Chemical mapping of a 177-nucleotide RNA with DMS and 2A3.
Conditions: 150 mM KOAc, 10 mM MgCl2 and 150 mM bicine (pH 8.5), 24 C.
Reactivities are given for positions 27 through 126.
Source: RMDB library OK1LIB, as collected in RNAgym.

[RMDB]
RNA sequence: GGGAACGACUCGAGUAGAGUCGAAAAGAAGAGAAUACGGUGUAAGAACAGCCCAACUUACACUGUGCGGCAUAACGGAAACACUGAUGUCGAAAAUUGGGCUGUUCGUGAAUGAACGAAAGAAGAAAUCGUCAGCAUAGUUCGCUAUGCUGACGAUAAAAGAAACAACAACAACAAC
Reactivity to DMS in 0.01 (KOAc 150mM, MgCl2 10mM, bicine 150mM(pH8.5), 24C), signal-to-noise 2, nucleotides 027 to 126: g000a080a050g020a060g000a090a080u050a010c060g000g000u000g040u020a070a000g000a060a070c040a000g020c010c000c020a070a110c000u010u000a010c030a000c070u000g000u000g000c090g000g010c100a010u010a160a130c130g010g040a190a070a140c110a090c090u020g000a060u000g000u000c020g000a050a000a030a080u010u000g000g020g030c000u000g020u010u000c020g000u010g000a060a200u100g000a180a060c040g010a020a020a080g000a080a100g000a120a190
Reactivity to 2A3 in 0.01 (KOAc 150mM, MgCl2 10mM, bicine 150mM(pH8.5), 24C), signal-to-noise 3, nucleotides 027 to 126: g170a050a010g130a000g000a070a030u110a080c000g040g000u010g000u000a000a000g020a080a060c020a020g000c000c010c000a050a080c000u000u010a010c020a000c020u020g030u030g010c010g030g000c000a020u030a210a060c100g030g090a170a180a000c160a000c120u070g020a020u000g010u020c000g040a000a040a040a100u060u080g000g010g000c000u020g010u010u030c020g020u010g070a110a220u270g020a020a010c000g060a120a020a050g240a010a010g030a040a140